[RMDB]
The data come from the RNA Mapping Database (RMDB), libraries RFM100 and RFMREP.
An RNA of 177 nucleotides, treated with DMS and 2A3 and read out base by base.
The RNA was probed in 150 mM KOAc, 10 mM MgCl2 and 150 mM bicine (pH 8.5) at 24 C.
2A3 adducts were read by reverse transcription with SuperScript II with manganese.

RNA sequence: GGGAACGACUCGAGUAGAGUCGAAAAAAUCCUGUAGAUGAUAUGGACUACCAGUGCAUUUGUGAUACGGUUUCUAAGAGUCGAGUUGUUUGGGAAUGCAGCUCAAAGUGGGUGGUAAAUUCCAUCUACUCACUAAUAAGUUCGCUUAUUAGUGAGUAAAAGAAACAACAACAACAAC
Reactivity to DMS in 0.01 (KOAc 150mM, MgCl2 10mM, bicine 150mM(pH8.5), 24C), signal-to-noise 7, nucleotides 027 to 126: a100a050u010c010c010u010g020u010a050g000a050u010g010a090u010a050u010g000g010a050c060u000a060c050c040a070g000u010g000c040a070u010u000u000g010u000g000a100u010a090c090g010g000u010u010u000c020u000a070a080g000a130g010u000c070g010a060g010u010u010g010u000u010u000g010g010g000a060a050u020g010c030a070g000c060u000c050a040a040a080g020u010g010g010g020u000g000g000u000a040a080a130u010u000c020c010a050u010c030u000
Reactivity to 2A3 in 0.01 (KOAc 150mM, MgCl2 10mM, bicine 150mM(pH8.5), 24C), signal-to-noise 9, nucleotides 027 to 126: a000a010u070c030c000u060g050u080a070g020a120u130g030a020u070a060u220g060g020a020c010u060a080c030c040a050g050u040g080c030a070u020u090u130g100u060g030a050u060a180c060g030g040u020u050u010c040u050a090a040g040a040g140u120c040g010a010g020u030u030g040u050u080u050g090g020g010a030a020u030g000c010a020g000c010u000c030a040a060a030g120u160g030g010g010u030g020g000u030a110a110a070u130u020c010c000a010u000c000u010